[RMDB]
RNA sequence: GGGAACGACUCGAGUAGAGUCGAAAACACACGAUGGAAGAAGCGCUGGCGGUUGCCGCUGACGUGGGCUUCCCGUGCAUUAUUCGCCCAUCCUUUACCAUGGGCGGUAGCGGCGGCGGUAUCGCUAGCCUACCGGUGGCUUCGGCCACCGGUAGGCAAAAGAAACAACAACAACAAC
Reactivity to 2A3 in 0.01 (KOAc 150mM, MgCl2 10mM, bicine 150mM(pH8.5), 24C), signal-to-noise 1, nucleotides 027 to 126: c050a010c050a060c030g130a140u150g040g070a050a040g080a150a050g050c050g010c030u010g010g000c020g000g090u090u170g030c000c000g000c040u040g000a010c000g020u140g020g070g050c080u090u040c080c010c010g060u040g000c000a060u000u180a090u130u300c000g000c000c000c000a020u080c000c050u180u280u260a070c050c060a010u000g010g000g010c000g050g000u000a000g000c010g020g000c010g030g010c050g030g000u040a020u040c000g010c060u010a020